[RMDB]
RNA sequence: GGGAACGACUCGAGUAGAGUCGAAAACGUAGGCUCAGCGUGUGUCGAGCACCCCGCGCACGAUCUCGAUCAGGGCGCGCGGUUGGUCACUUUGCACCGAGUGGCCUGACUUCUCGACGAUGUGAACGUCGUCUCUCCAAUUCGUUGGAGAGACGACAAAAGAAACAACAACAACAAC
Reactivity to 2A3 in 0.01 (KOAc 150mM, MgCl2 10mM, bicine 150mM(pH8.5), 24C), signal-to-noise 4, nucleotides 027 to 126: c040g070u080a020g000g050c000u040c110a060g030c070g040u140g020u030g020u080c030g000a020g010c000a030c010c000c000c000g010c000g020c000a010c030g100a210u030c010u060c080g200a200u100c120a190g060g070g000c000g000c000g000c000g020g000u070u170g010g000u040c040a040c060u050u030u200g030c070a060c040c010g010a020g040u110g020g000c020c000u030g080a160c040u100u020c000u030c010g000a040c010g040a060u110g080u130g130a100a080c080
Reactivity to DMS in 0.01 (KOAc 150mM, MgCl2 10mM, bicine 150mM(pH8.5), 24C), signal-to-noise 1, nucleotides 027 to 126: c040g000u000a040g000g000c000u110c000a110g000c040g000u000g010u000g000u000c050g000a030g000c300a050c010c070c020c000g030c000g000c000a170c140g000a040u000c040u000c070g040a060u000c060a090g000g080g000c040g000c040g040c210g000g000u000u020g000g010u000c110a110c000u000u000u020g000c020a000c110c010g060a050g070u020g000g000c010c000u000g040a060c000u000u010c080u000c130g000a100c050g000a240u020g080u000g010a240a130c170